[RMDB]
RNA sequence: GGGAACGACUCGAGUAGAGUCGAAAACCCAGCGACUCGAUAGUCAGAUUUGACUAUCGAGAAGGCGGGACUGGAUUCAGGGCAUCGAAAGCUCCAAGAUGCGAAAGAGAAAUCCCUGAAUCCAGUCCGGUCGAAGGAGUUAAGACCGAAACGCCAACUCCUAAUGAUGAUUCGUCAUCAUUAGGAGAAAAGAAACAACAACAACAAC
Reactivity to 2A3 in 0.01 (KOAc 150mM, MgCl2 10mM, bicine 150mM(pH8.5), 24C), signal-to-noise 5, nucleotides 027 to 156: c010c000c000a010g080c030g140a070c000u000c000g000a000u010a000g010u010c010a030g060a300u300u210u150g000a000c000u000a000u000c000g000a000g000a000a070g000g000c010g000g000g010a000c000u000g000g000a000u000u000c000a000g000g000g000c000a000u000c010g010a090a070a040g010c000u010c010c010a040a030g000a000u010g010c020g110a160a230a050g110a050g020a020a090a040u170c010c000c000u000g000a000a000u000c000c000a000g000u000c000c000g000g000u000c010g000a070a080g020g010a000g000u040u110a170a010g020a000c000c010g020a230a180a000c000g000c000c000a020a040
Reactivity to DMS in 0.01 (KOAc 150mM, MgCl2 10mM, bicine 150mM(pH8.5), 24C), signal-to-noise 2, nucleotides 027 to 156: c010c030c010a120g010c070g010a260c000u000c000g000a000u010a020g030u010c000a080g020a270u000u010u010g040a020c010u000a010u000c000g000a000g000a030a080g030g010c020g020g000g020a040c010u000g010g010a040u010u000c020a010g010g050g020c090a140u000c010g130a110a200a190g000c010u000c040c030a230a290g000a090u000g010c030g020a090a120a230g020a150g010a140a100a180u000c040c020c000u000g010a030a000u010c000c010a000g000u000c000c010g010g060u000c010g020a100a070g000g040a070g000u000u010a200a300g040a020c000c000g000a090a090a100c010g000c000c010a050a300
An RNA of 207 nucleotides, treated with 2A3 and DMS and read out base by base.